[RMDB]
RNA sequence: GGGAACGACUCGAGUAGAGUCGAAAAGCGCACCUUCGGGUGCGCACGUCGGGGUCCUGGCGAAGGAACUACCACUUUGAUCAGCCUGAAGCCUCCACGGGCUGGGAGUGGCCUAAGCCAGGACGGAGGCACCCUGUUCCUGGGAUUCGUCCCAGAAUCUACGAAUACUUUUCGAAGUAUUCGUAGAAAAAGAAACAACAACAACAAC
Reactivity to 2A3 in 0.01 (KOAc 150mM, MgCl2 10mM, bicine 150mM(pH8.5), 24C), signal-to-noise 3, nucleotides 027 to 156: g000c000g000c000a010c020c010u040u110c290g080g000g000u010g050c000g000c000a000c010g130u120c050g010g040g020g000u000c000c000u000g000g000c010g020a040a050g040g020a140a110c120u220a110c140c020a020c040u300u130u050g140a110u170c010a000g000c000c000u080g030a160a030g010c000c020u040c020c010a040c020g010g000g000c000u000g000g030g010a010g010u020g010g040c010c010u000a030a000g000c010c000a000g010g000a000c020g000g010a000g000g000c000a050c010c010c010u030g060u120u080c010c010u020g000g000g010a030u030u080c170g060u010c080c000c000a020g060a020a100
Reactivity to DMS in 0.01 (KOAc 150mM, MgCl2 10mM, bicine 150mM(pH8.5), 24C), signal-to-noise 1, nucleotides 027 to 156: g010c000g000c000a000c000c000u000u010c300g060g060g020u000g050c020g030c000a000c090g000u010c060g010g000g040g000u000c000c020u000g000g030c030g010a250a170g030g010a110a110c040u000a180c040c010a040c000u000u030u000g010a110u000c030a030g080c030c030u020g030a040a210g080c010c000u010c020c010a300c080g030g000g050c000u030g000g020g010a050g010u000g000g000c010c040u010a050a300g010c000c010a060g030g040a010c000g000g030a070g050g090c020a090c010c000c000u010g010u000u010c060c010u000g010g000g030a110u000u020c300g040u000c020c000c000a060g030a110a220
This 207-nucleotide RNA was probed chemically with 2A3 and DMS. The data come from the RNA Mapping Database (RMDB), library RNAMAK. For 2A3, 3,172 sequencing reads were counted. 2A3 adducts were read by reverse transcription with SuperScript II with manganese. Conditions: 150 mM KOAc, 10 mM MgCl2 and 150 mM bicine (pH 8.5), 24 C.